[RMDB]
Description:
The record gives the reactivity of an RNA of 177 nucleotides to DMS and 2A3. For 2A3 the reverse transcriptase was SuperScript II with manganese. The RNA was probed in 150 mM KOAc, 10 mM MgCl2 and 150 mM bicine (pH 8.5) at 24 C.

RNA sequence: GGGAACGACUCGAGUAGAGUCGAAAAGAAGGUCGAGGGAAUGACCUCAGCCUGCCACUGAGGGCUAACUGUGGCGUGAGUGUUGGCUCCAGGAGGUGCCAGUGGGAGGGCACUGGAGAGGGUGGGGUGUAUCUUUGAACUUCGGUUCAAAGAUACAAAAAGAAACAACAACAACAAC
Reactivity to DMS in 0.01 (KOAc 150mM, MgCl2 10mM, bicine 150mM(pH8.5), 24C), signal-to-noise 1, nucleotides 027 to 126: g000a260a070g010g000u000c090g020a080g000g000g000a080a100u020g000a080c000c000u000c010a130g080c010c010u000g030c010c030a140c010u020g000a110g000g000g000c010u030a010a180c040u000g010u010g040g040c110g020u000g010a100g020u000g000u020u010g010g010c030u010c030c050a100g010g000a140g000g000u010g000c000c030a070g000u000g020g040g010a080g040g050g020c060a070c120u000g000g000a180g010a070g000g030g000u000g040g010g000g060
Reactivity to 2A3 in 0.01 (KOAc 150mM, MgCl2 10mM, bicine 150mM(pH8.5), 24C), signal-to-noise 2, nucleotides 027 to 126: g090a060a020g000g040u070c060g050a010g030g030g160a080a300u270g030a090c000c000u000c000a000g030c020c000u050g020c010c010a030c040u000g020a190g060g080g010c000u070a060a020c030u030g040u080g100g030c060g030u120g090a080g020u060g030u080u160g040g000c010u040c020c000a060g040g060a090g110g000u000g110c000c030a040g020u070g020g060g010a180g030g040g040c070a040c140u090g030g060a130g010a060g040g070g070u300g020g050g000g010
DMS adducts were read by reverse transcription with MarathonRT.